[RMDB]
RNA sequence: GGGAACGACUCGAGUAGAGUCGAAAACUUUUGAUUUAGUCUUUGUUGACGUGGCACCCACAAUGGUCGAAACGUGAUACCUCGCUUAAGGGAUGUGGGUGCCACGUCAGCGAAGAUUAAGUCAAAAGGCUACAUAUUGUUUCGACAAUAUGUAGCCAAAAGAAACAACAACAACAAC
Reactivity to DMS in 0.01 (KOAc 150mM, MgCl2 10mM, bicine 150mM(pH8.5), 24C), signal-to-noise 3, nucleotides 027 to 126: c010u010u000u000u000g000a010u020u000u000a010g010u000c000u000u000u010g020u000u000g020a000c000g030u000g010g010c000a000c010c000c010a000c000a050a090u010g020g000u040c060g000a060a060a110c230g020u000g000a190u030a190c150c110u020c050g010c150u040u020a080a130g010g030g010a090u000g010u000g000g000g020u000g020c010c010a000c000g020u000c010a020g000c000g010a000a010g000a010u000u000a010a010g000u000c000a000a000a000a030
Reactivity to 2A3 in 0.01 (KOAc 150mM, MgCl2 10mM, bicine 150mM(pH8.5), 24C), signal-to-noise 9, nucleotides 027 to 126: c010u010u000u000u000g000a000u000u000u000a010g000u000c000u000u000u000g010u000u000g000a000c000g000u000g000g000c000a000c000c010c000a010c010a030a130u150g130g040u100c050g100a110a140a110c080g060u060g070a090u140a210c030c040u070c040g100c100u170u180a110a090g040g020g030a050u050g000u000g000g000g000u000g000c000c000a000c000g000u000c000a000g000c000g000a000a000g000a000u000u000a000a000g000u000c000a000a000a000a010

The data come from the RNA Mapping Database (RMDB), libraries RFM100 and RFMREP. The record gives the reactivity of an RNA of 177 nucleotides to DMS and 2A3. As a SHAPE reagent, 2A3 marks flexible, mostly unpaired nucleotides at the ribose 2'-OH. DMS (dimethyl sulfate) methylates the pairing face of unpaired adenines and cytosines.